The record gives the reactivity of an RNA of 177 nucleotides to DMS and 2A3. DMS adducts were read by reverse transcription with MarathonRT. Values cover nucleotides 27 to 126. The data come from the RNA Mapping Database (RMDB), library RFMREP. The 2A3 profile rests on 608 reads. The DMS profile rests on 2,174 reads.
RNA sequence: GGGAACGACUCGAGUAGAGUCGAAAAACGCCCGGGCCUCUGAGGUCCUGGAGCUGUCCUGCGGGCCCAGCGCUCAGAAGUGAUGAAUUGAUCAGAUAGAUGAGGCUGGGCUUAUCCCGGGCCACUGCACGUUAAUAUCGUUCGCGAUAUUAACGUGAAAAGAAACAACAACAACAAC
Reactivity to DMS in 0.01 (KOAc 150mM, MgCl2 10mM, bicine 150mM(pH8.5), 24C), signal-to-noise 3, nucleotides 027 to 126: a160c190g030c010c000c030g000g010g010c050c020u000c160u000g010a080g010g000u000c010c010u030g020g000a090g020c080u000g020u000c020c010u000g030c110g010g010g000c000c010c010a020g010c020g010c010u020c000a020g010a240a100g010u000g010a080u000g010a140a210u010u030g000a060u000c010a040g000a120u010a090g010a300u000g000a020g000g000c010u000g000g000g000c020u000u010a030u020c010c020c010g010g000g020c050c090a050c150u000g000
Reactivity to 2A3 in 0.01 (KOAc 150mM, MgCl2 10mM, bicine 150mM(pH8.5), 24C), signal-to-noise 1, nucleotides 027 to 126: a010c050g010c070c000c030g050g000g010c000c060u220c210u200g150a070g000g000u070c030c030u040g100g080a140g000c010u010g050u030c030c030u050g190c130g000g030g000c070c050c010a000g030c210g150c040u000c010a040g010a100a040g040u020g040a090u000g080a050a300u250u230g070a030u010c020a020g110a230u090a030g070a060u030g000a010g020g000c000u010g010g050g000c000u000u030a000u000c000c000c000g000g030g030c030c000a070c040u180g060